Chemical mapping of a 177-nucleotide RNA with DMS and 2A3.
RNA sequence: GGGAACGACUCGAGUAGAGUCGAAAAGAUGCCGAGAUACUCUCUGAUUGGAGGAUACCUCAGAAAGUUGAGUUCCUCGUCCGUCCAGUGUACGGCAGUGUUCAUGGACUCCACUGGAGGCACAAAAGUGUCCCAAGGAAUUCGUUCCUUGGGACACAAAAGAAACAACAACAACAAC
Reactivity to DMS in 0.01 (KOAc 150mM, MgCl2 10mM, bicine 150mM(pH8.5), 24C), signal-to-noise 2, nucleotides 027 to 126: g020a130u000g020c000c030g020a150g010a120u010a020c020u000c030u000c010u010g010a100u000u000g050g000a110g010g020a050u000a090c120c030u000c020a030g000a090a030a100g030u010u000g000a080g010u000u000c000c060u000c140g010u010c000c030g020u000c040c130a030g040u000g030u000a060c040g000g010c030a040g000u000g010u000u000c150a120u000g030g000a060c020u010c080c030a050c030u000g000g000a230g000g020c120a080c110a050a040a070a100
Reactivity to 2A3 in 0.01 (KOAc 150mM, MgCl2 10mM, bicine 150mM(pH8.5), 24C), signal-to-noise 2, nucleotides 027 to 126: g080a020u040g010c010c000g100a040g000a070u100a050c010u030c000u000c010u040g030a160u160u220g170g000a040g050g050a070u130a150c000c030u000c000a000g140a100a160a030g070u090u030g010a000g030u030u040c000c000u070c040g030u040c000c000g040u020c020c010a010g020u000g000u110a020c000g040g000c050a000g020u040g050u120u120c110a090u120g050g000a010c010u000c030c020a060c030u020g050g000a020g000g050c070a030c030a050a150a020a020
For 2A3, 1,822 sequencing reads were counted. High 2A3 reactivity points to a flexible backbone, as in loops and unpaired stretches. Reactivities are given for positions 27 through 126.